RNA sequence: GGGAACGACUCGAGUAGAGUCGAAAAGAUAUGGAGUCCUCCAUGGAGCAACAGCUCGGAAACGAGACAUGCUCUUUGGAGGGACUCCUAAGUCAAACUCUAUAAGGAGUUCGCUCCUUAUAGAGAAGUCCUACCAAUCGUUCGCGAUUGGUAGGACAAAAGAAACAACAACAACAAC
Reactivity to DMS in 0.01 (KOAc 150mM, MgCl2 10mM, bicine 150mM(pH8.5), 24C), signal-to-noise 1, nucleotides 027 to 126: g020a050u000a300u030g000g000a040g000u000c020c010u000c000c000a000u000g000g010a000g010c000a010a070c290a140g020c000u000c020g020g000a070a180a300c020g000a020g030a010c080a230u010g000c000u000c000u000u010u000g020g020a040g020g000g030a000c000u010c010c000u000a000a100g000u000c020a080a120a130c010u010c000u000a000u000a020a020g000g010a040g020u000u020c300g050c000u000c000c000u000u000a000u000a000g000a000g010a040a050
Notes: Chemical mapping of a 177-nucleotide RNA with DMS. Reactivities are given for positions 27 through 126. The RNA was probed in 150 mM KOAc, 10 mM MgCl2 and 150 mM bicine (pH 8.5) at 24 C.